[RMDB]
RNA sequence: GGGAACGACUCGAGUAGAGUCGAAAACGCACCGCGAGGCGCGCGCGCAGAUCGCCGUCGCCCACCGCGCGCAUGCAGUCGGACAGUUGCGCGACGUCCUCGUGCGUCGACAUCGCGAAGGCGACGACCCAUGCCGACUAUUCGUAGUCGGCAUGGGAAAAGAAACAACAACAACAAC
Reactivity to DMS in 0.01 (KOAc 150mM, MgCl2 10mM, bicine 150mM(pH8.5), 24C), signal-to-noise 1, nucleotides 027 to 126: c030g000c120a070c030c070g000c010g030a030g000g000c030g000c060g030c020g030c000g000c060a030g000a040u020c120g000c080c010g040u000c060g000c040c030c100a100c130c040g000c070g020c020g000c110a080u010g010c060a140g010u010c050g000g010a130c130a160g010u000u020g000c080g000c000g030a130c000g010u000c000c000u000c110g010u010g000c010g010u000c030g000a110c080a030u000c010g000c000g000a050a150g000g000c000g000a030c110g000a300
Reactivity to 2A3 in 0.01 (KOAc 150mM, MgCl2 10mM, bicine 150mM(pH8.5), 24C), signal-to-noise 2, nucleotides 027 to 126: c010g030c010a020c000c060g000c010g050a020g020g000c040g000c010g020c000g020c010g000c090a000g000a040u080c090g040c100c030g030u030c000g020c010c050c000a090c060c050g050c000g000c010g000c040a030u140g010c060a030g020u120c010g020g030a040c020a080g060u180u130g040c010g000c000g020a120c020g060u130c030c010u000c020g020u060g010c020g000u000c010g010a070c030a080u040c040g000c010g100a090a000g090g000c000g020a060c030g050a090
The record gives the reactivity of an RNA of 177 nucleotides to DMS and 2A3.
Source: RMDB library OK2TRN, as collected in RNAgym.
2A3 adducts were read by reverse transcription with SuperScript II with manganese.
Conditions: 150 mM KOAc, 10 mM MgCl2 and 150 mM bicine (pH 8.5), 24 C.